[RMDB]
Structure probing data (DMS and 2A3) for a 177-nucleotide construct.
For 2A3 the reverse transcriptase was SuperScript II with manganese.
Source: RMDB library TTRDEL, as collected in RNAgym.
High 2A3 reactivity points to a flexible backbone, as in loops and unpaired stretches.

RNA sequence: GGGAACGACUCGAGUAGAGUCGAAAAGAUAUGGAAGACGCAUGGAGUCGAUCGGAAACGAUCGAACUAUGAAGUGCCUCUUCCUAAGUCAAAGACAGCAUUUUGGGUUCGCCCAAAAUGCUGUCAACAUCCACUUAUUCUUCGGAAUAAGUGGAUGAAAAGAAACAACAACAACAAC
Reactivity to DMS in 0.01 (KOAc 150mM, MgCl2 10mM, bicine 150mM(pH8.5), 24C), signal-to-noise 5, nucleotides 027 to 126: g000a040u010a300u010g000g000a010a000g010a010c300g010c000a010u000g010g000a060g020u000c000g000a010u000c000g020g000a100a070a190c010g010a010u000c000g000a030a020c020u000a130u000g000a130a200g000u000g000c000c090u000c000u010u000c000c000u000a020a080g010u010c040a070a130a100g000a010c000a010g000c000a010u000u000u000u000g000g000g010u000u010c260g010c000c000c000a000a000a000a000u000g010c000u000g000u000c000a020a110
Reactivity to 2A3 in 0.01 (KOAc 150mM, MgCl2 10mM, bicine 150mM(pH8.5), 24C), signal-to-noise 3, nucleotides 027 to 126: g010a020u080a050u120g000g000a010a000g010a010c020g030c010a010u030g040g010a030g000u020c020g000a010u000c000g020g040a070a060a060c020g010a010u010c000g020a100a070c030u080a300u300g060a060a010g010u000g000c000c010u010c000u000u000c000c000u010a150a020g030u020c020a090a010a120g010a010c000a000g020c000a000u000u000u000u010g000g020g070u060u130c220g140c000c000c000a000a000a000a000u000g000c000u000g000u000c000a010a000